[RMDB]
RNA sequence: GGGAACGACUCGAGUAGAGUCGAAAACUUGUCGGGGGUGGCCGCCGGUGCGCCGACGGUGACGCACUGACCGUGCCACGAGCCGAGCUCGACUGAGGGCGGCAGCGAUACGAGGCACAUACCCGUGACCUGAACGAUCUUUCGAGAUCGUUCAGGUAAAAGAAACAACAACAACAAC
Reactivity to 2A3 in 0.01 (KOAc 150mM, MgCl2 10mM, bicine 150mM(pH8.5), 24C), signal-to-noise 2, nucleotides 027 to 126: c030u070u120g040u040c010g020g000g000g020g010u030g010g000c000c000g040c020c000g010g010u020g000c040g000c000c000g050a130c110g130g060u200g040a020c000g020c020a010c020u000g000a040c000c010g040u140g000c000c000a020c000g000a010g020c000c030g040a040g020c000u020c050g300a300c120u140g030a080g000g100g000c000g010g020c020a020g070c020g000a000u030a140c040g030a120g020g000c030a020c010a070u130a050c020c000c050g020u060g040
Reactivity to DMS in 0.01 (KOAc 150mM, MgCl2 10mM, bicine 150mM(pH8.5), 24C), signal-to-noise 3, nucleotides 027 to 126: c090u000u020g020u000c040g000g000g010g000g040u000g010g000c010c020g000c080c000g010g000u000g020c050g030c000c000g020a120c260g000g010u020g000a050c010g000c000a020c030u000g010a070c150c090g000u010g020c000c000a060c010g000a100g050c030c030g010a170g020c100u000c010g000a150c110u010g000a060g010g000g010c070g020g000c030a080g010c060g000a090u000a070c100g020a180g010g020c050a040c110a140u000a140c020c000c000g000u010g020